RNA sequence: GGGAACGACUCGAGUAGAGUCGAAAACAAUUUGCAGUGUUAAAUUCUCUGUCUAUCGUCAGAGUUUCGGAUCGCCAUAUUAUUCCCGGAUAUUGAAAGAAAAGGAAUAAAACGAUAUUAAAAUGCACACGGUGUUAACCCGAGGAAACGCCACGGACCAUACCCCAUCAUUCGUGAUGGGGUAUGGAAAAGAAACAACAACAACAAC
Reactivity to 2A3 in 0.01 (KOAc 150mM, MgCl2 10mM, bicine 150mM(pH8.5), 24C), signal-to-noise 2, nucleotides 027 to 156: c010a030a110u100u110u140g020c060a040g020u000g040u180u210a070a140a160u120u080c030u000c010u000g010u010c020u080a090u020c030g040u000c010a000g010a000g010u020u030u100c020g020g020a040u030c060g040c030c040a090u080a060u190u000a020u040u030c010c000c000g000g010a100u150a040u090u120g090a140a130a030g080a010a080a010a010g040g050a010a030u070a040a010a020a020c010g000a000u000a000u050u100a040a060a090a150u080g030c030a000c000a010c100g000g000u020g020u030u050a000a080c000c020c050g090a040g040g040a030a040a040c040g000c020c000a010c030g030g010a010
Reactivity to DMS in 0.01 (KOAc 150mM, MgCl2 10mM, bicine 150mM(pH8.5), 24C), signal-to-noise 1, nucleotides 027 to 156: c040a060a110u000u000u000g010c030a100g000u070g030u000u010a000a070a110u000u010c010u010c010u010g030u000c060u000a080u000c070g050u010c030a020g000a040g000u010u000u010c000g030g020a110u010c000g010c040c030a110u000a120u000u000a080u010u000c010c000c000g000g050a220u000a190u000u000g020a080a170a120g000a040a110a120a080g000g010a030a040u010a000a050a090a090c010g010a060u000a090u010u000a040a070a060a170u000g000c030a090c100a080c080g090g060u010g000u000u000a110a150c020c000c010g010a100g020g010a100a010a120c090g060c010c020a060c080g010g040a160

Structure probing data (2A3 and DMS) for a 207-nucleotide construct.
Values cover nucleotides 27 to 156.
The 2A3 profile rests on 993 reads.
Conditions: 150 mM KOAc, 10 mM MgCl2 and 150 mM bicine (pH 8.5), 24 C.